An RNA of 177 nucleotides, treated with DMS and 2A3 and read out base by base. 2A3 adducts were read by reverse transcription with SuperScript II with manganese.
RNA sequence: GGGAACGACUCGAGUAGAGUCGAAAAAGCUGACGGACGCCGGCCGGGCCGUGGCACAGCCUCUGCUGCUGGCAGAACAGGACCGCCUCCGGGCAGAACAGCGUGCGGCAGAAGUCGUCGUACUGCCCUCACACUUAUUUUUCGAAAUAAGUGUGAGAAAAGAAACAACAACAACAAC
Reactivity to DMS in 0.01 (KOAc 150mM, MgCl2 10mM, bicine 150mM(pH8.5), 24C), signal-to-noise 9, nucleotides 027 to 126: a120g010c030u010g000a080c050g010g000a080c090g020c100c050g010g020c070c060g010g000g020c050c040g020u000g020g010c060a110c170a120g000c050c060u000c060u000g010c050u010g020c110u010g010g010c010a050g000a110a120c130a110g000g010a090c040c050g010c060c040u000c050c040g010g000g010c020a020g000a090a100c120a090g010c040g010u010g020c030g000g010c020a110g010a100a080g010u000c040g010u000c040g010u000a080c020u000g000c030c050
Reactivity to 2A3 in 0.01 (KOAc 150mM, MgCl2 10mM, bicine 150mM(pH8.5), 24C), signal-to-noise 7, nucleotides 027 to 126: a000g030c010u020g020a010c020g050g000a010c030g030c060c020g030g010c010c010g040g030g000c020c010g040u030g020g000c030a020c040a160g030c000c010u060c040u060g030c010u030g020c030u060g040g000c000a010g030a090a050c060a070g010g050a060c010c010g010c000c010u010c020c030g010g020g000c020a020g020a120a030c030a030g040c010g070u120g020c010g010g000c030a030g060a300a030g090u070c040g000u000c010g000u020a040c020u040g010c000c000
The DMS profile rests on 16,163 reads.